[RMDB]
RNA sequence: GGGAACGACUCGAGUAGAGUCGAAAAAAAGCAGUUGGCGCGUACUCCUCAAGCACGUUAGACUCCAUGGAUACGGACCUGGCUGCCGGUCACCAGCCCAAACCAGAUGUCUAAAAGGGGCAGAUACCAGCCAUGUCUGGUUCGCCAGACAUGGCUGAAAAGAAACAACAACAACAAC
Reactivity to 2A3 in 0.01 (KOAc 150mM, MgCl2 10mM, bicine 150mM(pH8.5), 24C), signal-to-noise 1, nucleotides 027 to 126: a000a000a000g020c020a000g010u050u060g000g000c030g000c010g090u000a070c010u000c000c020u100c060a080a010g050c000a040c150g100u250u150a050g060a000c120u010c090c000a080u060g080g000a000u000a170c030g000g000a000c000c000u000g100g000c000u000g040c010c010g060g000u050c100a000c120c000a000g080c000c000c020a030a030a030c000c030a000g100a170u080g110u060c030u080a000a000a120a270g040g090g040g000c000a080g040a080u240a020c000
Reactivity to DMS in 0.01 (KOAc 150mM, MgCl2 10mM, bicine 150mM(pH8.5), 24C), signal-to-noise 1, nucleotides 027 to 126: a030a120a020g020c010a080g010u040u000g000g000c000g000c030g000u000a130c060u020c000c000u010c120a180a140g000c010a140c140g110u140u000a050g000a060c000u000c030c040a170u000g000g000a190u000a000c200g000g000a040c040c000u000g000g000c070u010g000c060c060g000g000u000c160a100c030c100a090g020c010c040c000a030a120a040c290c200a000g000a060u000g000u020c000u000a170a080a070a250g030g040g020g030c060a030g050a080u000a030c160

Overview:
Chemical mapping of a 177-nucleotide RNA with 2A3 and DMS. The RNA was probed in 150 mM KOAc, 10 mM MgCl2 and 150 mM bicine (pH 8.5) at 24 C. The DMS profile rests on 896 reads. It was measured as part of the RMDB library OK1LIB.